[RMDB]
Source: RMDB library M2RFPK, as collected in RNAgym. An RNA of 207 nucleotides, treated with 2A3 and DMS and read out base by base. The RNA was probed in 150 mM KOAc, 10 mM MgCl2 and 150 mM bicine (pH 8.5) at 24 C. For 2A3 the reverse transcriptase was SuperScript II with manganese. DMS adducts were read by reverse transcription with MarathonRT.
RNA sequence: GGGAACGACUCGAGUAGAGUCGAAAAGAUCGGCAGAGGGACUGGCCCGAUGAAGCCCGGCAACCUAACUUUAUUUAAGCGUAAAGUGAAGGUGCUAAUUCCAGCAAAAUGGUGUAUUCCGUUUUGGUUUAUCCGCCCUGGUUCGCCAGGGCGGAAAGAUAACAGUGAGCUUCGGCUCACUGUUAUCAAAAGAAACAACAACAACAAC
Reactivity to 2A3 in 0.01 (KOAc 150mM, MgCl2 10mM, bicine 150mM(pH8.5), 24C), signal-to-noise 1, nucleotides 027 to 156: g000a070u120c040g000g010c020a010g020a040g020g030g040a010c000u030g060g070c000c010c000g020a150u020g020a030a000g010c000c000c070g020g010c020a120a150c000c000u000a000a000c000u000u020u020a040u050u140u120a110a050g100c020g050u000a000a000a000g000u000g030a090a050g000g000u000g010c000u000a020a040u130u090c000c010a020g050c030a050a010a010a010u040g000g000u120g080u170a140u240u060c010c010g000u010u000u020u020g050g010u070u070u100a050u020c000c000g000c000c000c000u020g060g000u090u060c170g070c100c000a000g000g000g000c000g000g000a000a000a000
Reactivity to DMS in 0.01 (KOAc 150mM, MgCl2 10mM, bicine 150mM(pH8.5), 24C), signal-to-noise 1, nucleotides 027 to 156: g010a050u000c020g010g000c020a110g000a070g000g080g000a100c060u010g010g010c050c000c000g010a140u000g000a150a120g000c010c000c130g040g000c030a050a020c010c000u010a190a010c000u000u000u000a010u010u000u000a160a230g020c280g020u010a010a020a020g050u000g010a110a040g020g010u000g040c010u010a070a120u000u000c010c030a060g030c040a020a030a090a070u010g010g030u000g020u020a130u010u010c020c000g000u000u000u020u010g010g000u010u020u010a080u020c000c010g000c000c000c010u000g030g000u000u010c300g030c020c000a000g040g010g030c010g000g000a000a010a030